[RMDB]
RNA sequence: GGGAACGACUCGAGUAGAGUCGAAAAGGCCAUCGUUUUUGCCAGACCAUUUUCGAUGGCCAUAGGUCUGGUUUAUAGUUCAAUCGCCGAGAGGCGUACAGUUAGAGUAGCGAGCUCGAAGCACGCGACCGUUAUGAGCUCGCGAAGGUCGCGGAGAAAAUAUACUCAUAUUCGUAUGAGUAUAUUUAAAAGAAACAACAACAACAAC
Reactivity to DMS in 0.01 (KOAc 150mM, MgCl2 10mM, bicine 150mM(pH8.5), 24C), signal-to-noise 5, nucleotides 027 to 156: g020g010c000c000a030u000c020g020u000u010u010u010u000g040c030c020a240g000a050c030c010a140u000u000u010u010c040g020a030u000g020g010c010c000a010u010a030g020g000u000c010u020g030g010u000u000u000a100u000a140g020u000u000c090a080a150u000c010g020c030c000g010a280g010a300g030g010c000g020u000a030c080a100g020u000u000a120g010a150g020u000a190g000c020g010a040g020c000u010c020g010a140a180g020c040a060c030g020c030g000a070c020c010g020u000u010a090u010g010a070g000c010u000c020g010c010g000a040a080g020g010u000c020g030c010g000g000a230g000a110
Reactivity to 2A3 in 0.01 (KOAc 150mM, MgCl2 10mM, bicine 150mM(pH8.5), 24C), signal-to-noise 4, nucleotides 027 to 156: g010g000c010c000a020u020c060g070u030u060u080u190u120g020c040c030a040g020a060c030c010a120u070u040u060u060c010g010a000u010g000g010c000c020a020u060a020g000g000u000c020u030g020g030u010u110u090a120u050a030g080u050u050c050a050a060u060c070g000c000c000g040a040g000a030g040g000c020g000u010a010c020a020g040u100u130a020g020a030g120u030a020g010c010g010a000g030c020u030c050g040a080a010g090c060a010c080g030c020g020a040c040c020g010u030u020a110u210g000a010g000c000u000c020g000c000g000a010a000g000g020u030c020g000c030g040g010a090g060a030
The record gives the reactivity of an RNA of 207 nucleotides to DMS and 2A3. The 2A3 profile rests on 3,519 reads. For DMS the reverse transcriptase was MarathonRT.